An RNA of 207 nucleotides, treated with 2A3 and DMS and read out base by base.
[RMDB]
RNA sequence: GGGAACGACUCGAGUAGAGUCGAAAAGCUUAAUACACCGGGUAGGGUUAUAAUGCGAAGUAUGUUACAAUAGGCAACCUGCAGCCAACUUCUACAUUGUAGGAUGCUGUUCACAGAUCAAAUGGCAGUGGGUGCAUCAUGUAAGCUAAUGAUGCGCGAUGCAUAGUACGUUCGCGUACUAUGCAUCAAAAGAAACAACAACAACAAC
Reactivity to 2A3 in 0.01 (KOAc 150mM, MgCl2 10mM, bicine 150mM(pH8.5), 24C), signal-to-noise 5, nucleotides 027 to 156: g000c010u040u080a060a010u090a120c080a030c050c050g070g020g000u060a060g030g020g020u070u060a100u070a150a100u150g030c040g010a030a020g030u070a030u150g140u110u130a070c090a110a100u080a150g010g010c010a030a040c010c030u040g010c010a010g020c010c020a080a060c030u070u020c020u020a060c020a190u060u190g010u020a030g010g040a030u100g020c000u030g040u130u080c070a060c010a080g080a090u080c030a030a040a070u080g050g000c030a020g010u080g060g010g010u020g010c020a010u000c000a000u020g070u130a110a000g040c040u050a070a010u030g010a020u020g010c030g000c020
Reactivity to DMS in 0.01 (KOAc 150mM, MgCl2 10mM, bicine 150mM(pH8.5), 24C), signal-to-noise 2, nucleotides 027 to 156: g000c030u000u000a100a140u000a050c050a090c040c000g010g040g010u020a050g030g030g030u000u010a050u000a060a100u010g010c040g010a040a010g030u000a080u000g000u010u010a030c090a060a140u010a100g010g000c030a030a080c040c030u000g030c040a150g010c260c030a060a080c050u000u010c020u000a040c050a100u000u000g040u000a050g030g000a070u010g010c000u010g020u000u000c060a110c100a090g020a060u000c050a010a020a110u010g020g000c080a060g020u000g010g000g000u010g000c000a010u000c000a020u000g010u000a070a070g000c110u010a090a060u000g010a030u000g000c010g050c100
About this RNA
Source: RMDB library RSTRND, as collected in RNAgym. Conditions: 150 mM KOAc, 10 mM MgCl2 and 150 mM bicine (pH 8.5), 24 C. High DMS reactivity at an A or C suggests that its Watson-Crick edge is free. Values are in units of 0.01, from 0 to 300, in steps of 10.